Structure probing data (2A3 and DMS) for a 207-nucleotide construct. The RNA was probed in 150 mM KOAc, 10 mM MgCl2 and 150 mM bicine (pH 8.5) at 24 C. For DMS the reverse transcriptase was MarathonRT.

RNA sequence: GGGAACGACUCGAGUAGAGUCGAAAAUCCUAAGUCAUAAUGGAGAAGUACCGCCCAUGCUACCCACCGCUUAUCGGAAACGAUAAGCGAGGCAUGUAACAAGUACUUCUAUGAAGUUAUGAUAUGGAAAAGCACUACGACUUCGGUCGUAGUGCAAGAUGCAACUAAUGUUCGCAUUAGUUGCAUCAAAAGAAACAACAACAACAAC
Reactivity to 2A3 in 0.01 (KOAc 150mM, MgCl2 10mM, bicine 150mM(pH8.5), 24C), signal-to-noise 6, nucleotides 027 to 156: u010c010c000u040a100a010g020u010c000a000u010a010a010u030g030g010a020g010a000a000g000u000a000c000c030g060c020c040c010a010u010g000c000u060a110c030c050c080a050c040c020g000c010u000u000a000u000c000g030g080a110a050a040c000g000a000u000a000a000g000c000g000a000g000g000c000a010u010g050u080a090a080c060a140a030g000u000a010c000u000u000c020u080a300u020g010a000a000g000u010u000a000u000g010a010u010a090u130g060g040a060a130a030a040g000c010a000c000u010a000c000g010a000c000u060u120c300g110g000u000c000g000u010a000g010u000g000c000a000a000
Reactivity to DMS in 0.01 (KOAc 150mM, MgCl2 10mM, bicine 150mM(pH8.5), 24C), signal-to-noise 2, nucleotides 027 to 156: u010c000c000u000a040a250g000u000c010a030u010a010a020u000g010g010a020g020a040a030g060u000a000c000c040g020c200c280c020a030u000g000c030u000a020c010c000c010a300c220c010g000c010u000u020a020u020c000g050g000a140a110a250c010g020a020u000a000a000g040c000g000a000g010g000c020a000u010g000u010a030a090c080a080a010g010u000a010c000u000u000c000u000a070u000g000a160a290g020u000u000a020u010g010a020u010a300u020g010g010a100a110a120a160g020c000a010c000u000a010c000g020a020c000u000u000c300g000g000u000c010g040u030a000g010u020g010c020a010a030